The record gives the reactivity of an RNA of 177 nucleotides to DMS and 2A3. The reactions ran in a buffer of 150 mM KOAc, 10 mM MgCl2 and 150 mM bicine (pH 8.5), at 24 C. It was measured as part of the RMDB libraries RFM100 and RFMREP.
RNA sequence: GGGAACGACUCGAGUAGAGUCGAAAAACGCUGGACGAUACGUCGUCCAGCGAAUUUGCAAUGAUGACAAAAACGAUUGGAUGAUGUACUUUGAUUAACUCAUAAAUCGCAAUGCUCUGAGCGACAAAUUGCAUGGAUAUUUCGAUAUCCAUGCAAUAAAAGAAACAACAACAACAAC
Reactivity to DMS in 0.01 (KOAc 150mM, MgCl2 10mM, bicine 150mM(pH8.5), 24C), signal-to-noise 6, nucleotides 027 to 126: a140c010g000c000u000g010g010a010c010g010a020u000a090c190g050u000c000g020u000c010c000a000g010c000g020a010a010u010u000u010g010c040a040a170u010g010a040u010g000a110c040a030a010a070a110a170c050g010a030u000u000g010g010a020u000g000a020u030g020u000a050c170u010u030u020g010a130u020u010a060a050c060u000c010a010u000a030a000a020u000c020g010c010a040a190u000g000c020u000c020u010g010a300g000c030g010a050c220a050a080
Reactivity to 2A3 in 0.01 (KOAc 150mM, MgCl2 10mM, bicine 150mM(pH8.5), 24C), signal-to-noise 9, nucleotides 027 to 126: a000c010g000c000u000g000g000a000c000g010a020u020a040c240g090u010c000g000u000c010c000a000g000c000g000a000a000u030u020u110g000c010a020a050u060g030a030u060g060a230c030a010a050a010a010a010c020g020a020u030u060g180g060a030u030g020a040u150g040u110a070c070u130u130u080g100a120u160u220a080a020c010u010c010a010u040a040a030a010u010c010g000c040a010a070u020g000c000u000c000u030g030a020g000c010g040a040c040a030a190